[RMDB]
Notes: The record gives the reactivity of an RNA of 177 nucleotides to DMS and 2A3. For DMS the reverse transcriptase was MarathonRT. For 2A3 the reverse transcriptase was SuperScript II with manganese. The data come from the RNA Mapping Database (RMDB), library OK2TST. Reactivities are given for positions 27 through 126.

RNA sequence: GGGAACGACUCGAGUAGAGUCGAAAAACAAUGUUCGCCGCGCUGCGGGCCGGACAGCUGGUCGCGGCCUGGACCACCACCGCCGACCCCGACAUCCCCGCGGACCUGAUCAUGCUGACCGACGGCACAUCAGCUUAUCAUUCGUGAUAAGCUGAUGAAAAGAAACAACAACAACAAC
Reactivity to DMS in 0.01 (KOAc 150mM, MgCl2 10mM, bicine 150mM(pH8.5), 24C), signal-to-noise 4, nucleotides 027 to 126: a060c100a090a090u000g000u000u000c040g000c030c010g000c080g030c100u010g000c050g000g010g020c040c010g020g020a060c050a070g010c100u000g010g020u000c030g030c070g010g020c030c030u010g010g000a080c090c090a080c070c050a070c060c070g020c030c010g010a130c050c010c010c040g000a090c100a090u010c020c020c010c070g020c070g000g000a080c060c050u000g010a040u000c060a050u010g000c020u000g000a080c040c030g000a100c070g010g000c070a190
Reactivity to 2A3 in 0.01 (KOAc 150mM, MgCl2 10mM, bicine 150mM(pH8.5), 24C), signal-to-noise 2, nucleotides 027 to 126: a010c080a090a150u110g010u070u020c030g000c050c000g060c030g020c060u100g010c040g040g060g000c100c020g020g030a020c020a030g090c070u110g080g000u060c030g000c010g090g020c000c010u030g000g010a020c020c030a070c000c000a020c000c020g050c020c030g030a040c010c010c000c000g020a030c020a090u090c000c000c010c000g000c030g020g020a030c000c030u020g000a040u070c040a060u130g010c000u010g010a070c020c060g050a070c000g010g050c030a020